[RMDB]
RNA sequence: GGGAACGACUCGAGUAGAGUCGAAAAUUGAUCAGGGAGAAGAGAAGUGCAGCUGCAAAAAAGAAAGGAGCAAGUCUGUUAUGCUUGGCUCUAGCCUCAACAGGACUUUUCAACCCCAUGAUCCUUGCCGCUGGACUGAUUGCAUGUGAUCCCAACCCGUCUAUUUCGUAUUCGUACGAAAUAGACGAAAAGAAACAACAACAACAAC
Reactivity to 2A3 in 0.01 (KOAc 150mM, MgCl2 10mM, bicine 150mM(pH8.5), 24C), signal-to-noise 6, nucleotides 027 to 156: u110u090g020a010u040c030a040g020g040g020a120g020a190a050g020a030g010a090a000g010u060g040c040a080g020c020u020g010c040a030a070a050a030a030a040g080a040a050a020g000g010a010g000c020a010a010g030u030c070u110g150u180u150a130u300g040c080u070u050g140g030c000u010c030u060a040g010c000c010u040c010a020a030c010a050g060g070a050c000u040u040u050u060c090a090a130c010c000c010c010a030u060g010a020u020c000c020u000u040g010c010c010g000c030u040g000g080a040c020u040g050a130u090u090g010c070a100u110g040u090g110a070u000c000c010c000a020a050c010c000
Reactivity to DMS in 0.01 (KOAc 150mM, MgCl2 10mM, bicine 150mM(pH8.5), 24C), signal-to-noise 3, nucleotides 027 to 156: u010u010g010a110u020c040a130g030g000g020a110g000a110a300g000a110g000a090a030g030u000g000c030a070g020c030u000g010c020a000a050a070a090a090a100g000a070a170a160g000g020a030g000c040a060a060g020u000c070u020g020u010u000a080u010g010c000u000u010g040g000c070u010c080u000a100g030c250c040u000c030a040a050c040a040g010g000a100c030u000u000u000u000c050a020a190c020c010c000c010a060u000g020a040u000c030c050u010u000g020c020c060g000c030u010g020g020a090c020u020g000a130u010u000g040c030a090u010g020u000g000a170u000c010c010c010a030a120c240c050
Conditions: 150 mM KOAc, 10 mM MgCl2 and 150 mM bicine (pH 8.5), 24 C. The record gives the reactivity of an RNA of 207 nucleotides to 2A3 and DMS. The 2A3 profile rests on 4,779 reads. Source: RMDB library OK3TST, as collected in RNAgym. For 2A3 the reverse transcriptase was SuperScript II with manganese.